[RMDB]
RNA sequence: GGGAACGACUCGAGUAGAGUCGAAAAAAACAACAGAUGCUGGAGAGGAUGUGGAGAAAUAGUACCGCUUUUACACUGUUGGUGGGAGUGUUAAUUAGUUCAACCAUUGUGGAAGACAGUGUGGCGAUUCCUCAAGGAUCUAGAACCAGAAAUACCAUACUAUGCAUAGGUUCGCCUAUGCAUAGUAAAAAGAAACAACAACAACAAC
Reactivity to 2A3 in 0.01 (KOAc 150mM, MgCl2 10mM, bicine 150mM(pH8.5), 24C), signal-to-noise 4, nucleotides 027 to 156: a000a000a050c070a010a010c010a010g030a030u070g070c010u030g030g060a050g010a020g060g020a040u030g030u080g020g080a080g070a060a070a030u140a050g070u090a060c020c010g030c000u050u020u060u060a010c030a000c020u050g030u070u040g050g030u020g030g050g000a080g000u050g010u040u020a090a050u100u110a070g090u040u060c020a030a040c030c030a040u040u060g060u080g100g080a030a030g010a010c040a010g020u020g000u020g050g000c000g030a040u040u040c000c000u000c010a010a000g010g000a000u010c010u050a030g010a060a010c010c030a020g110a050a060a010u130a050c050c050a000
Reactivity to DMS in 0.01 (KOAc 150mM, MgCl2 10mM, bicine 150mM(pH8.5), 24C), signal-to-noise 4, nucleotides 027 to 156: a020a050a080c060a080a100c060a070g020a080u010g010c020u000g010g000a110g020a180g030g000a130u010g030u000g030g000a150g020a080a040a050u000a090g020u020a090c060c020g030c050u000u010u010u000a100c030a060c020u010g010u010u000g020g060u000g030g020g000a090g030u020g010u000u000a040a090u000u000a080g010u000u000c030a100a080c030c020a100u000u010g030u000g010g010a070a060g000a030c030a060g020u010g030u010g020g020c030g000a140u000u000c010c010u000c040a080a110g020g010a060u000c040u000a100g000a110a090c000c020a080g000a070a040a090u010a090c040c020a180
Notes:
The data come from the RNA Mapping Database (RMDB), library OK3TST. This 207-nucleotide RNA was probed chemically with 2A3 and DMS. Values are in units of 0.01, from 0 to 300, in steps of 10. 2A3 adducts were read by reverse transcription with SuperScript II with manganese. For 2A3, 3,226 sequencing reads were counted. For DMS the reverse transcriptase was MarathonRT. For DMS, 8,184 sequencing reads were counted. High 2A3 reactivity points to a flexible backbone, as in loops and unpaired stretches.